RNA sequence: GGGAACGACUCGAGUAGAGUCGAAAAAAUAAGUUUCGCUACGAUCGCAUGUGUAGAGAUGUUGUCAGAUCUGCCAUGGAAAAAGAUGAAUUUUGUUUAUUUUUUGAUCGUCCGUUGGCAUGGCAAGCUUCUGUUAAAAUUUCGAUUUUAACAGAAGAAAAGAAACAACAACAACAAC
Reactivity to 2A3 in 0.01 (KOAc 150mM, MgCl2 10mM, bicine 150mM(pH8.5), 24C), signal-to-noise 5, nucleotides 027 to 126: a000a010u230a060a010g030u030u040u070c060g000c060u020a010c020g040a050u030c020g000c070a030u030g060u020g020u090a020g020a020g010a100u040g060u210u080g100u150c040a020g010a130u010c020u030g000c000c000a010u010g040g050a010a050a010a030a020g020a010u040g010a030a060u090u150u160u240g100u030u100u050a060u020u060u020u030u030u080g050a030u030c030g020u010c030c010g040u040u050g000g020c040a030u060g020g000c020a020a010g000
Reactivity to DMS in 0.01 (KOAc 150mM, MgCl2 10mM, bicine 150mM(pH8.5), 24C), signal-to-noise 7, nucleotides 027 to 126: a070a060u010a070a060g000u000u000u000c040g010c040u000a040c040g000a080u000c060g020c050a050u000g010u010g020u000a050g010a060g000a100u010g010u010u010g010u000c050a050g000a130u000c060u000g000c000c000a030u000g000g010a070a040a020a050a050g000a020u000g000a020a020u000u010u010u010g010u000u010u000a010u000u000u000u000u000u000g000a070u000c050g000u000c080c040g020u000u000g020g000c030a050u000g000g010c110a080a100g000
This 177-nucleotide RNA was probed chemically with 2A3 and DMS. Conditions: 150 mM KOAc, 10 mM MgCl2 and 150 mM bicine (pH 8.5), 24 C. For DMS, 15,137 sequencing reads were counted. It was measured as part of the RMDB library OK2TST. The 2A3 profile rests on 8,048 reads.